[RMDB]
RNA sequence: GGGAACGACUCGAGUAGAGUCGAAAAACGGCCUGUACGCAGGCCGAUCCUUUAUUUAUCUGAUUUGGAUUGUCAUUUGAAUCAAUCGUCAGGUAUAAUGAGGGAUAACAUGCGCUACGGCGCAUGAUCACAUUACGUCGUUCGCGACGUAAUGUGAAAAAGAAACAACAACAACAAC
Reactivity to 2A3 in 0.01 (KOAc 150mM, MgCl2 10mM, bicine 150mM(pH8.5), 24C), signal-to-noise 9, nucleotides 027 to 126: a000c000g000g000c000c010u020g030u050a030c290g000c080a000g000g000c000c000g000a000u010c000c000u000u010u020a000u000u010u000a000u000c010u010g020a030u050u090u260g180g020a010u000u000g050u030c110a180u070u100u300g170a170a090u130c000a010a000u000c010g010u010c000a000g010g010u010a060u080a020a010u000g010a010g000g000g010a010u010a030a030c010a000u010g000c000g000c000u030a040c250g110g000c000g000c000a000u000g010a020
Reactivity to DMS in 0.01 (KOAc 150mM, MgCl2 10mM, bicine 150mM(pH8.5), 24C), signal-to-noise 3, nucleotides 027 to 126: a220c000g000g000c000c000u000g020u000a090c180g020c010a010g000g000c000c010g000a000u000c000c000u000u000u000a010u000u000u000a000u000c010u000g000a020u020u030u030g030g000a000u000u000g000u030c080a300u010u040u050g010a190a090u020c020a010a020u000c010g020u000c020a000g000g000u010a000u080a010a020u000g000a000g000g000g000a030u010a070a190c010a010u000g000c010g010c000u000a100c130g030g010c010g000c010a000u000g000a150